RNA sequence: GGGAACGACUCGAGUAGAGUCGAAAAGUGAUAUUUUCUAUAACGCGGAUACAACAGCGAGUGAACGUUGGAUGCGUAUGGGUAUUUUAGGUGUAGAAAUGGAAUCAGCUGCAUUAUACAUGAAUGCAUAGCGUUGCAGUUUCGACUGCAACGCUAUAAAAGAAACAACAACAACAAC
Reactivity to DMS in 0.01 (KOAc 150mM, MgCl2 10mM, bicine 150mM(pH8.5), 24C), signal-to-noise 1, nucleotides 027 to 126: g060u030g040a050u000a050u000u020u020u000c010u020a060u010a010a020c000g000c090g000g000a020u020a000c010a080a060c040a120g000c030g040a180g070u030g000a100a040c210g000u040u060g030g060a010u000g040c160g010u020a110u000g020g000g040u000a020u000u000u010u000a150g010g020u000g040u000a000g000a000a020a010u010g000g040a020a070u010c020a070g000c140u000g010c010a030u020u010a060u040a060c190a010u010g020a020a000u020g010c110
Reactivity to 2A3 in 0.01 (KOAc 150mM, MgCl2 10mM, bicine 150mM(pH8.5), 24C), signal-to-noise 1, nucleotides 027 to 126: g100u100g080a060u030a150u040u130u030u000c010u000a090u030a030a030c000g000c000g030g000a020u070a110c070a210a000c000a010g010c020g200a000g000u210g040a030a000c090g020u010u110g030g070a060u160g000c030g000u220a020u060g000g000g070u010a130u000u220u000u110a010g070g000u000g000u000a000g110a000a060a140u100g060g000a000a090u030c000a040g120c030u000g000c060a000u050u020a090u130a090c070a120u100g120a030a050u020g000c000